[RMDB]
RNA sequence: GGGAACGACUCGAGUAGAGUCGAAAAGGUCGGGGGGGAGCGGCUGCUUCGGUCGCCGCGGAUCACUGGCGUCCAGCGGAGAAACAGGAGCUCGUCUCCUUCCUUUCGCUGCUGGCUCCACAUCCGAGUCAUGUUAUAUGUUCGCAUAUAACAUGACAAAAGAAACAACAACAACAAC
Reactivity to 2A3 in 0.01 (KOAc 150mM, MgCl2 10mM, bicine 150mM(pH8.5), 24C), signal-to-noise 3, nucleotides 027 to 126: g040g010u220c020g000g000g010g030g000g000g000a020g000c000g020g000c030u040g020c050u150u170c130g050g000u020c020g010c010c000g020c010g010g000a000u000c010a010c040u010g010g000c010g050u090c010c010a000g000c000g040g000a030g020a030a080a100c300a180g000g020a000g010c060u110c210g210u090c040u010c010c000u010u030c000c000u000u000u010c010g000c010u000g000c000u010g020g000c000u010c000c000a010c010a010u020c000c000g000a030
Reactivity to DMS in 0.01 (KOAc 150mM, MgCl2 10mM, bicine 150mM(pH8.5), 24C), signal-to-noise 5, nucleotides 027 to 126: g010g010u020c170g000g010g000g010g010g000g010a220g020c020g010g010c010u000g000c150u010u010c090g020g010u000c150g010c010c030g010c020g010g000a020u000c020a040c060u000g000g010c060g000u010c000c000a010g000c000g010g010a060g000a010a010a010c200a010g000g000a010g010c030u020c300g000u010c000u000c000c000u000u000c030c030u000u000u000c000g000c010u000g010c010u000g000g000c010u000c000c000a020c110a030u000c010c010g010a180
Conditions: 150 mM KOAc, 10 mM MgCl2 and 150 mM bicine (pH 8.5), 24 C. Structure probing data (2A3 and DMS) for a 177-nucleotide construct. 2A3 adducts were read by reverse transcription with SuperScript II with manganese. For DMS, 9,888 sequencing reads were counted. For 2A3, 7,376 sequencing reads were counted. It was measured as part of the RMDB library VIROID.